[RMDB]
RNA sequence: GGGAACGACUCGAGUAGAGUCGAAAAACGAUGUUUCCCAGCCAGGGGUUUUCAUCCUCAAGUUUCUUGAUCUUCUUGUUGGUUCGCCGGAGAUCCUUCUCGAGUAUUCGCUUUUUCUUCCUUUCUUCUACCCACUGUUCGAGGAUCUCCUCCCUCGGUUAAUUUGAGUGUUCGCACUCAAAUUAACAAAAGAAACAACAACAACAAC
Reactivity to 2A3 in 0.01 (KOAc 150mM, MgCl2 10mM, bicine 150mM(pH8.5), 24C), signal-to-noise 1, nucleotides 027 to 156: a000c020g030a010u020g000u020u060u010c000c000c010a030g070c050c030a040g000g010g060g000u000u020u120u300c060a080u110c020c000u050c030a040a070g070u030u070u040c000u110u150g110a120u080c030u130u000c020u060u070g010u070u060g000g070u070u110c040g050c080c050g040g000a030g000a000u000c000c030u120u020c070u030c060g070a070g070u020a130u070u030c040g020c100u140u060u050u050u070c030u050u050c020c000u070u120u100c000u070u020c030u120a160c020c030c030a040c040u050g030u180u120c060g020a030g000g020a010u000c000u010c050c010u010c010c000c000u000c060g030
The data come from the RNA Mapping Database (RMDB), library VIROID. Chemical mapping of a 207-nucleotide RNA with 2A3. For 2A3 the reverse transcriptase was SuperScript II with manganese. Reactivities are given for positions 27 through 156.